[RMDB]
RNA sequence: GGGAACGACUCGAGUAGAGUCGAAAACAGGGAAUGCUAUCCAAGGGUUUGCCUGUGGAUGUGGGGCAUCAUAUACAGCUAAUGAUGUCGAAGUCCAAUCAUCUGGCAUGAUUAAGCCAAAUGCUCUCAACUUCGAACUUCGGUUCGAAGAAAAGAAACAACAACAACAAC
Reactivity to 2A3 in 0.01 (KOAc 150mM, MgCl2 10mM, bicine 150mM(pH8.5), 24C), signal-to-noise 9, nucleotides 027 to 129: c020a010g000g000g050a060a060u100g120c010u050a080u150c050c040a030a070g060g000g010u080u090u090g200c000c000u070g030u040g050g020a020u050g050u140g060g150g000g000c010a010u020c010a000u090a010u060a090c090a020g050c060u130a140a020u010g010a010u000g000u000c010g020a070a010g020u000c020c000a030a050u070c010a030u000c030u060g020g000c010a020u050g040a160u260u170a080a030g010c010c000a020a040a030u090g000c010u020c000u010c030a030a100
Reactivity to DMS in 0.01 (KOAc 150mM, MgCl2 10mM, bicine 150mM(pH8.5), 24C), signal-to-noise 7, nucleotides 027 to 129: c080a000g010g000g010a090a060u000g050c030u020a090u080c090c100a080a100g030g020g000u040u020u030g060c050c000u060g000u050g020g020a080u020g040u040g050g020g050g010c020a000u000c040a040u020a130u000a150c120a080g020c090u000a110a030u020g010a000u020g030u020c030g030a120a160g000u010c030c060a110a130u060c000a040u030c030u000g020g020c020a080u040g020a130u090u140a000a000g000c010c050a030a040a050u040g040c190u020c000u030c080a070a200

Record summary: The record gives the reactivity of an RNA of 170 nucleotides to 2A3 and DMS. Conditions: 150 mM KOAc, 10 mM MgCl2 and 150 mM bicine (pH 8.5), 24 C. DMS adducts were read by reverse transcription with MarathonRT. For DMS, 25,429 sequencing reads were counted.